RNA sequence: GGGAACGACUCGAGUAGAGUCGAAAAGAAAAAGAGGCAGAGCCUUUUCUCUCAUACACCCCAUUGUAUUGGGUGGAUUGCUCUGUUAUAGACUGUGGGCAGGUUACUUAGGAUGUCCUCAGAGAAAACGUAUCGGUAGUUUCGACUACCGAUACGUAAAAGAAACAACAACAACAAC
Reactivity to 2A3 in 0.01 (KOAc 150mM, MgCl2 10mM, bicine 150mM(pH8.5), 24C), signal-to-noise 3, nucleotides 027 to 126: g100a010a110a000a000a010g070a060g120g000c000a000g000a010g000c010c020u070u000u000u030c010u000c000u000c010a000u000a050c000a020c000c060c020c040a070u060u150g050u060a040u050u200g000g000g000u020g000g010a020u040u020g010c000u000c000u000g020u030u020a010u070a040g180a030c000u020g000u040g020g000g000c000a010g010g070u130u050a060c030u200u230a200g180g170a120u010g020u000c000c010u020c000a010g040a010g050a030a100a000